An RNA of 177 nucleotides, treated with DMS and 2A3 and read out base by base. DMS adducts were read by reverse transcription with MarathonRT. Conditions: 150 mM KOAc, 10 mM MgCl2 and 150 mM bicine (pH 8.5), 24 C.
[RMDB]
RNA sequence: GGGAACGACUCGAGUAGAGUCGAAAAGUGAGAACGUUCGCGUUCUCACAAAUACUAAGACCGAAGCUUAGUUGGCCGACACUUCCCUUGGAAACGGCACAAAAAUGAUAGGUUUCGACCUAUCAAAGCAUAGGGGAUGUUUCGACAUCCCCUAUGCAAAAGAAACAACAACAACAAC
Reactivity to DMS in 0.01 (KOAc 150mM, MgCl2 10mM, bicine 150mM(pH8.5), 24C), signal-to-noise 1, nucleotides 027 to 126: g010u000g000a040g000a010a000c000g030u000u040c170g040c010g020u000u010c000u040c010a010c010a030a120a040u010a000c030u000a000a000g000a140c050c080g010a020a140g000c030u000u000a020g000u000u000g000g000c010c000g000a070c110a070c170u020u000c010c000c010u000u020g000g010a120a100a120c080g000g000c000a160c300a000a020a020a030a080u000g010a010u010a020g010g010u000u000u010c300g010a010c020c000u000a000u000c000a020a050a090
Reactivity to 2A3 in 0.01 (KOAc 150mM, MgCl2 10mM, bicine 150mM(pH8.5), 24C), signal-to-noise 1, nucleotides 027 to 126: g030u000g000a010g000a000a010c010g000u040u050c160g020c000g080u030u000c030u000c000a000c000a000a010a000u070a000c010u000a010a000g010a030c050c230g140a120a000g030c010u000u010a000g030u070u040g130g010c000c000g020a020c040a020c070u030u010c000c000c000u010u020g090g020a100a070a030c020g010g050c080a010c020a120a090a020a040a040u110g000a000u000a000g000g050u040u040u110c170g090a050c000c000u000a000u000c000a000a030a020
Reactivities are given for positions 27 through 126. The DMS profile rests on 829 reads. For 2A3 the reverse transcriptase was SuperScript II with manganese. The 2A3 profile rests on 1,726 reads. Source: RMDB library M2PK50, as collected in RNAgym.